[RMDB]
RNA sequence: GGGAACGACUCGAGUAGAGUCGAAAACGGAAGUGCCGUUCUCGAACUGGACCGAUUGUUGCCUGAACAAUAUCAAUCUUCCCAGCUCAGAACGCACUUUCCUUAUCCCGACACCCCGACAAACAGUGAUAUUCUAAUAGUUCGCUAUUAGAAUAUCAAAAGAAACAACAACAACAAC
Reactivity to DMS in 0.01 (KOAc 150mM, MgCl2 10mM, bicine 150mM(pH8.5), 24C), signal-to-noise 7, nucleotides 027 to 126: c300g000g010a030a010g010u000g000c090c060g040u000u000c000u010c150g030a010a020c010u000g000g010a100c250c180g000a020u000u010g010u000u010g020c060c070u010g010a100a120c300a070a130u000a030u000c010a020a010u000c000u010u020c270c000c000a020g010c030u000c000a020g000a010a010c010g010c000a010c000u000u000u010c010c030u000u000a120u000c000c000c000g000a090c050a030c010c000c000c000g000a090c220a110a060a100c240a080g010u000
Reactivity to 2A3 in 0.01 (KOAc 150mM, MgCl2 10mM, bicine 150mM(pH8.5), 24C), signal-to-noise 5, nucleotides 027 to 126: c040g000g010a010a000g010u010g100c140c050g020u020u010c010u060c100g010a020a010c000u010g000g020a020c020c060g000a020u010u010g020u020u030g030c010c030u050g050a040a020c020a050a010u020a010u070c010a010a000u010c000u060u040c030c000c000a000g000c000u000c000a000g000a010a000c000g000c000a000c000u000u000u000c000c000u000u050a030u010c000c000c000g000a000c000a010c010c010c000c000g030a050c090a060a170a000c040a040g070u020
Record summary: An RNA of 177 nucleotides, treated with DMS and 2A3 and read out base by base. For DMS the reverse transcriptase was MarathonRT. For 2A3, 20,243 sequencing reads were counted. Reactivities are given for positions 27 through 126. The reactions ran in a buffer of 150 mM KOAc, 10 mM MgCl2 and 150 mM bicine (pH 8.5), at 24 C. The data come from the RNA Mapping Database (RMDB), library RFMREP. The DMS profile rests on 7,853 reads.